[RMDB]
RNA sequence: GGGAACGACUCGAGUAGAGUCGAAAAGUUGCAGGGAAAAUUGAUCCACUUGAUGAUAUCGAAACGAUCAAUACAGAGUUAGCCCUUGCUGAUUUAGAUAGUUGUGAACGUGCUAUUCAGCGUUUACCACUUGGUAUCUCUUCGGAGAUACCAAGUGAAAAGAAACAACAACAACAAC
Reactivity to DMS in 0.01 (KOAc 150mM, MgCl2 10mM, bicine 150mM(pH8.5), 24C), signal-to-noise 5, nucleotides 027 to 126: g020u000u010g040c040a050g010g010g000a050a040a090a060u000u000g010a010u000c010c070a060c300u000u000g040a060u010g010a170u020a300u000c000g000a000a060a300c300g000a010u000c010a020a020u000a140c160a150g010a120g000u020u000a090g000c040c010c010u000u000g010c010u000g020a070u000u020u000a080g010a090u000a020g000u000u000g000u000g000a020a010c020g000u010g000c120u000a110u010u000c090a110g010c000g000u000u000u000a040c090
Reactivity to 2A3 in 0.01 (KOAc 150mM, MgCl2 10mM, bicine 150mM(pH8.5), 24C), signal-to-noise 3, nucleotides 027 to 126: g170u130u100g020c020a010g000g010g030a000a060a060a050u000u030g000a000u000c030c010a030c060u020u040g000a030u050g030a040u070a030u300c020g000a000a030a010c020g010a020u010c000a020a000u070a110c070a060g250a050g130u150u150a060g020c030c000c000u010u090g000c050u040g040a060u060u030u120a090g010a130u100a060g090u070u070g020u020g030a000a000c010g030u050g080c070u130a170u240u230c040a030g020c020g020u000u020u010a040c010

The data come from the RNA Mapping Database (RMDB), library OK2TST. Structure probing data (DMS and 2A3) for a 177-nucleotide construct. For DMS the reverse transcriptase was MarathonRT. The reactions ran in a buffer of 150 mM KOAc, 10 mM MgCl2 and 150 mM bicine (pH 8.5), at 24 C.